[RMDB]
RNA sequence: GGGAACGACUCGAGUAGAGUCGAAAACGGCUAAUACCAUCGGGCACAUUUCGCGCGGCGAUCAAAAGCCUAUCCUGAACCCCUGAUAUCGAAGCGUGCAUCAUGGUGUGUGCCGAGGCCGGGCCAAUAAAUGACCACGUUUCGACGUGGUCAUUUAAAAAGAAACAACAACAACAAC
Reactivity to DMS in 0.01 (KOAc 150mM, MgCl2 10mM, bicine 150mM(pH8.5), 24C), signal-to-noise 1, nucleotides 027 to 126: c070g000g000c020u000a100a040u010a140c060c060a190u000c040g000g000g040c000a040c010a050u000u010u010c020g010c090g010c120g010g000c020g000a080u000c130a030a070a180a220g000c020c050u000a070u000c010c060u010g010a050a150c040c010c000c070u010g000a030u000a110u010c010g000a030a030g000c080g000u000g020c180a070u000c120a010u010g000g010u000g000u000g020u000g000c010c000g010a080g000g010c020c050g020g000g040c040c040a060a130
An RNA of 177 nucleotides, treated with DMS and read out base by base.
The data come from the RNA Mapping Database (RMDB), library OK2TST.
DMS adducts were read by reverse transcription with MarathonRT.
For DMS, 920 sequencing reads were counted.
Reactivities are given for positions 27 through 126.